[RMDB]
RNA sequence: GGGAACGACUCGAGUAGAGUCGAAAAGGCUGGCAAGUCCAAACCACCACUCAAUCGUAAUUAUGUUUUUACUGGUUAUCAUAUAACCAAAAAUAGUAAAGUGCAGCUCGGUGAGUACAUUUUCGAGAUAGAACAGUGUUCGCACUGUUCAAAAGAAACAACAACAACAAC
Reactivity to 2A3 in 0.01 (KOAc 150mM, MgCl2 10mM, bicine 150mM(pH8.5), 24C), signal-to-noise 9, nucleotides 027 to 129: g070g010c050u030g010g030c080a100a030g040u000c000c000a080a060a040c020c010a040c010c010a030c010u020c010a060a120u060c030g090u120a060a060u140u130a120u120g110u040u050u010u020u020a060c050u030g000g020u020u030a040u040c100a030u090a020u040a220a030c010c020a010a020a010a070a060u170a030g030u050a030a060a010g030u040g040c010a000g010c020u020c040g030g010u020g000a020g010u040a060c020a080u080u090u020u070c070g020a060g010a090u080a110
Reactivity to DMS in 0.01 (KOAc 150mM, MgCl2 10mM, bicine 150mM(pH8.5), 24C), signal-to-noise 7, nucleotides 027 to 129: g000g000c070u040g000g020c080a090a060g010u060c010c050a070a140a070c000c000a080c040c010a160c000u040c000a050a030u000c110g060u050a010a010u030u030a050u000g030u000u000u000u000u000a050c080u020g000g000u000u000a000u030c220a140u060a300u020a020a040c000c030a000a040a080a130a000u070a110g030u040a030a020a040g040u030g030c000a010g020c070u030c040g000g000u020g030a000g000u030a060c120a100u040u030u010u010c070g020a110g000a120u010a070

This 170-nucleotide RNA was probed chemically with 2A3 and DMS. It was measured as part of the RMDB library 15KLIB. For DMS, 29,677 sequencing reads were counted. The reactions ran in a buffer of 150 mM KOAc, 10 mM MgCl2 and 150 mM bicine (pH 8.5), at 24 C.